This 207-nucleotide RNA was probed chemically with 2A3. Reactivities are given for positions 27 through 156.
[RMDB]
RNA sequence: GGGAACGACUCGAGUAGAGUCGAAAAGAUAUCUCAGCAUCACAAGAUGGCAAAAUGGCAAACUCUAGCAGUUUCAUGCAGCUGGUCUUUAACCUGCAACCCAGUGGUGCAGCCACUAAUAUAAAAUACUGACAUUCUGCCAGCUGCUCCAAGCCCACGUCCCUGAUUAUUUCGAUAAUCAGGGACGAAAAGAAACAACAACAACAAC
Reactivity to 2A3 in 0.01 (KOAc 150mM, MgCl2 10mM, bicine 150mM(pH8.5), 24C), signal-to-noise 1, nucleotides 027 to 156: g040a010u070a110u050c040u030c050a010g060c000a050u090c020a000c030a120a100g040a070u030g090g000c020a050a130a040a090u070g010g030c010a060a060a030c010u070c000u100a070g000c050a020g080u040u150u070c040a050u160g050c010a000g010c010u020g000g020u040c030u000u180u080a060a170c010c030u040g010c010a000a110c000c000c100a120g000u040g040g000u030g000c000a020g020c000c040a000c000u060a100a120u100a120u150a170a130a220a070u180a100c040u070g040a080c010a110u090u090c100u130g010c000c000a000g000c000u000g000c000u020c030c010a050a030g030c010c000c000a020